[RMDB]
RNA sequence: GGGAACGACUCGAGUAGAGUCGAAAAUGUAUUUAAUGUGGAUAGCAGUUACACUUCAAAGAGUGGGAAUGACUAAACACUUUGGAACAGAGGAAGUAACAGAUAAACCAGUGUUCUUGGAAGGCACAUCCAGAAAUAAACUGACAUAAAGAGAGGAUAAAGGGUUUUAUUUCGAUAAAACCCUUUAAAAAGAAACAACAACAACAAC
Reactivity to 2A3 in 0.01 (KOAc 150mM, MgCl2 10mM, bicine 150mM(pH8.5), 24C), signal-to-noise 2, nucleotides 027 to 156: u040g010u010a170u040u190u090a080a000u090g000u130g020g030a010u030a010g020c030a000g040u010u080a000c040a070c010u000u160c040a190a200a000g040a080g000u010g010g010g050a010a080u050g010a020c020u040a050a090a000c020a000c020u010u030u070g040g010a030a040c010a010g040a060g120g030a050a020g060u080a040a000c010a020g040a090u100a090a110a000c020c000a040g000u010g010u080u020c020u020u020g020g010a020a020g020g000c010a030c000a050u030c020c010a000g050a010a020a000u040a000a170a000c050u030g060a000c010a040u250a150a080a120g050a000g020a030g040g080a030
Reactivity to DMS in 0.01 (KOAc 150mM, MgCl2 10mM, bicine 150mM(pH8.5), 24C), signal-to-noise 3, nucleotides 027 to 156: u000g030u000a030u000u010u000a050a070u010g020u000g010g010a270u000a070g030c020a100g030u000u000a100c010a030c030u000u000c040a140a200a080g010a040g020u000g010g010g020a020a050u010g000a090c030u000a030a090a260c010a010c020u000u000u010g030g020a050a060c020a080g000a120g020g030a060a070g000u010a050a080c060a080g020a130u000a060a080a140c070c030a060g020u000g000u000u000c070u000u000g030g000a060a070g000g000c050a060c050a060u000c030c040a070g000a020a020a070u000a040a020a130c050u000g010a060c070a100u000a050a060a060g010a180g000a110g050g020a220
The record gives the reactivity of an RNA of 207 nucleotides to 2A3 and DMS.
2A3 adducts were read by reverse transcription with SuperScript II with manganese.
For 2A3, 797 sequencing reads were counted.
Values cover nucleotides 27 to 156.
The reactions ran in a buffer of 150 mM KOAc, 10 mM MgCl2 and 150 mM bicine (pH 8.5), at 24 C.